[RMDB]
RNA sequence: GGGAACGACUCGAGUAGAGUCGAAAACACAAAAUGAAUCAUUUUUGGAAUUUGUGGAGGCAGAACAACGCUUAAUAGUUGUUCCUAAAUCUAACCCAGCAACUUUUCAACCAACUGCAAUAGGUUCAAUAUUAGGAAUGAACGCAUUUGGCGUAUAGAUGAGGUAGGGUUUCGACCCUACCUCAUCAAAAGAAACAACAACAACAAC
Reactivity to 2A3 in 0.01 (KOAc 150mM, MgCl2 10mM, bicine 150mM(pH8.5), 24C), signal-to-noise 1, nucleotides 027 to 156: c050a000c000a010a000a010a030u250g040a000a170u170c060a130u110u060u060u050u250g050g070a090a040u080u020u040g010u070g050g010a010g040g000c050a010g040a060a000c070a000a000c140g010c090u090u140a040a040u040a240g000u000u010g000u000u000c000c000u030a010a000a030u000c050u020a000a060c000c030c060a040g130c010a030a050c050u150u130u090u130c060a050a100c070c030a020a050c020u000g000c030a020a300u040a200g050g000u000u000c000a000a060u070a250u260u110a100g130g000a020a020u100g020a030a010c010g000c000a000u040u030u010g070g020c070g100u190a100u130a130
Chemical mapping of a 207-nucleotide RNA with 2A3. The RNA was probed in 150 mM KOAc, 10 mM MgCl2 and 150 mM bicine (pH 8.5) at 24 C. Source: RMDB library OK3TST, as collected in RNAgym. High 2A3 reactivity points to a flexible backbone, as in loops and unpaired stretches.